Conditions: 150 mM KOAc, 10 mM MgCl2 and 150 mM bicine (pH 8.5), 24 C. The record gives the reactivity of an RNA of 170 nucleotides to DMS and 2A3.
RNA sequence: GGGAACGACUCGAGUAGAGUCGAAAAACCCAUCCCCGGUCCGAGUGAAGGGGGACUCCGGGACGCCUUGCAUGUUGGGGACGAAGCCGCCCCCGGGCGCUCCCCUCGAUCCACCUUCGAGGGGGUUAAGGCCAGCGGUUCGCCGCUGGCAAAAGAAACAACAACAACAAC
Reactivity to DMS in 0.01 (KOAc 150mM, MgCl2 10mM, bicine 150mM(pH8.5), 24C), signal-to-noise 3, nucleotides 027 to 129: a050c000c000c020a150u040c030c050c000c030g050g010u090c070c040g030a100g020u000g070a050a040g010g000g090g000g000a020c050u020c090c200g010g010g000a140c090g040c040c010u000u000g000c150a050u070g070u060u040g070g000g020g000a080c030g010a120a090g030c070c050g050c050c020c010c000c000g000g000g000c050g000c100u050c010c020c000c030u030c120g000a300u030c080c090a090c070c060u030u000c010g040a080g020g010g040g020g000u000u000a100a060g010
Reactivity to 2A3 in 0.01 (KOAc 150mM, MgCl2 10mM, bicine 150mM(pH8.5), 24C), signal-to-noise 3, nucleotides 027 to 129: a010c010c000c010a030u030c000c010c010c030g010g150u080c040c030g060a080g070u250g090a020a050g070g010g000g000g000a040c000u050c050c010g000g000g000a000c020g010c000c000u140u200g080c110a140u180g070u160u130g100g000g010g030a010c060g080a080a020g040c030c030g020c010c030c000c000c000g000g000g000c000g000c050u040c000c000c000c010u010c010g010a030u000c020c050a040c030c000u000u000c000g000a070g000g000g000g000g020u000u120a040a020g070